[RMDB]
RNA sequence: GGGAACGACUCGAGUAGAGUCGAAAAUGUUGUCAGUCAAACUUGUUUGUUUUGGAAAGGAACUUCAUAGAGCUCUGAAAACCAGUUCAAAGGACAAACCCUUUGACUUUGGUAUUAAGUGAAUGUCUAUCCUACAUACUUUCGAGUAUGUAGGAUAAAAAGAAACAACAACAACAAC
Reactivity to 2A3 in 0.01 (KOAc 150mM, MgCl2 10mM, bicine 150mM(pH8.5), 24C), signal-to-noise 1, nucleotides 027 to 126: u140g010u120u030g010u000c060a020g070u020c070a060a100a120c060u140u130g080u190u250u000g090u040u030u150u020g040g000a080a100a040g000g010a000a020c000u030u030c040a040u010a070g060a010g040c050u000c030u120g010a100a060a030a020c010c010a000g000u070u070c000a000a000a000g000g020a010c080a020a140a150c010c000c100u000u000u000g000a010c020u080u120u040g010g020u020a060u080u090a100a000g080u020g090a060a000u090g000u000c030
Reactivity to DMS in 0.01 (KOAc 150mM, MgCl2 10mM, bicine 150mM(pH8.5), 24C), signal-to-noise 8, nucleotides 027 to 126: u000g010u000u000g010u010c070a100g010u010c080a060a080a080c110u000u000g010u010u000u000g000u000u000u000u000g000g010a070a090a150g010g010a070a050c030u000u000c060a070u000a070g010a120g000c040u000c040u000g010a090a090a110a040c010c020a030g000u000u000c010a010a010a020g000g010a100c110a070a090a170c220c010c010u000u000u000g000a020c070u000u010u000g010g010u000a030u000u010a080a110g010u000g010a060a060u000g000u000c080
This 177-nucleotide RNA was probed chemically with 2A3 and DMS. For DMS, 11,195 sequencing reads were counted. The RNA was probed in 150 mM KOAc, 10 mM MgCl2 and 150 mM bicine (pH 8.5) at 24 C. DMS (dimethyl sulfate) methylates the pairing face of unpaired adenines and cytosines. For 2A3 the reverse transcriptase was SuperScript II with manganese. DMS adducts were read by reverse transcription with MarathonRT. The 2A3 profile rests on 952 reads. The data come from the RNA Mapping Database (RMDB), library OK2TRN.